Notes:
Chemical mapping of a 177-nucleotide RNA with DMS and 2A3.
RNA sequence: GGGAACGACUCGAGUAGAGUCGAAAAGCACGGAGACAUGCACGGAAACGUCGACGGAGGCUCCAUGUCGAACGUGGCUGUCCGAGGCCUCCGUAUUUGACUGGUAAUUCAGUCGUUAGGACAGCUACGUGCGAGUACCAUUCGUGGUACUCGCACGAAAAGAAACAACAACAACAAC
Reactivity to DMS in 0.01 (KOAc 150mM, MgCl2 10mM, bicine 150mM(pH8.5), 24C), signal-to-noise 2, nucleotides 027 to 126: g020c040a040c030g030g030a150g030a040c040a050u000g000c240a060c050g020g000a100a080a100c110g010u000c080g000a040c000g000g000a040g000g000c000u020c110c080a060u000g000u010c030g010a050a100c050g020u000g000g010c000u000g000u000c000c000g010a130g010g020c000c000u000c000c000g010u000a010u000u050u020g010a000c000u000g020g000u010a150a140u020u010c030a000g010u010c000g020u010u000a100g020g010a040c020a000g010c010u000a040
Reactivity to 2A3 in 0.01 (KOAc 150mM, MgCl2 10mM, bicine 150mM(pH8.5), 24C), signal-to-noise 2, nucleotides 027 to 126: g070c030a000c020g030g030a110g020a030c030a010u040g000c070a020c090g040g020a100a060a020c080g090u090c070g090a010c010g020g000a010g010g000c030u010c030c020a020u050g040u070c050g040a100a110c050g020u030g030g000c000u010g000u040c000c000g010a030g000g030c000c000u000c000c010g020u030a170u050u120u160g010a000c000u010g060g030u120a100a130u120u100c000a010g000u000c020g010u080u070a020g020g000a010c000a010g000c000u010a010

Notes
The data come from the RNA Mapping Database (RMDB), library OK2TRN. Conditions: 150 mM KOAc, 10 mM MgCl2 and 150 mM bicine (pH 8.5), 24 C.